RNA sequence: GGGAACGACUCGAGUAGAGUCGAAAAGCUGCCUGGCUGAGGGCUCCUGACUUUGCAGAGCCAGCAGGAGUGGUCUUCCUGGGCCACUGUGCUGCACCUUCUGCGGUCUCCCGUGGAGUGACAGGAAGACCCACGGGUCAGGAAACAAGCUAGAAAACACUAUUAAUCGUUUCGACGAUUAAUAGUGAAAAGAAACAACAACAACAAC
Reactivity to DMS in 0.01 (KOAc 150mM, MgCl2 10mM, bicine 150mM(pH8.5), 24C), signal-to-noise 2, nucleotides 027 to 156: g050c010u000g010c020c010u020g010g000c020u000g000a120g020g000g020c070u000c000c030u000g020a080c040u000u000u000g020c110a060g010a070g010c080c010a050g020c030a060g010g000a070g050u000g000g000u000c020u010u010c150c140u010g010g000g040c030c010a040c020u000g000u010g060c020u000g000c070a090c080c020u000u000c030u000g030c050g010g010u010c040u010c050c000c050g080u000g020g000a090g010u010g000a230c020a110g020g000a090a120g000a090c000c010c000a080c050g000g000g000u000c000a040g000g020a080a030a090c030a100a050g000c030u000a120g000a110a110a090a300
Reactivity to 2A3 in 0.01 (KOAc 150mM, MgCl2 10mM, bicine 150mM(pH8.5), 24C), signal-to-noise 3, nucleotides 027 to 156: g020c010u010g010c010c000u010g020g020c040u080g070a110g020g030g040c000u010c010c010u070g080a170c030u160u140u160g000c050a040g000a030g110c110c020a010g020c020a020g020g110a030g010u030g000g030u000c010u180u160c080c100u080g000g010g010c010c010a050c040u060g060u110g020c020u010g000c020a090c020c030u150u090c020u070g030c000g020g030u050c060u060c040c000c020g040u060g010g050a080g020u100g050a080c020a010g010g030a040a050g040a080c000c010c000a020c010g010g000g000u010c010a010g000g000a050a030a010c060a050a030g010c000u050a050g130a030a080a010a000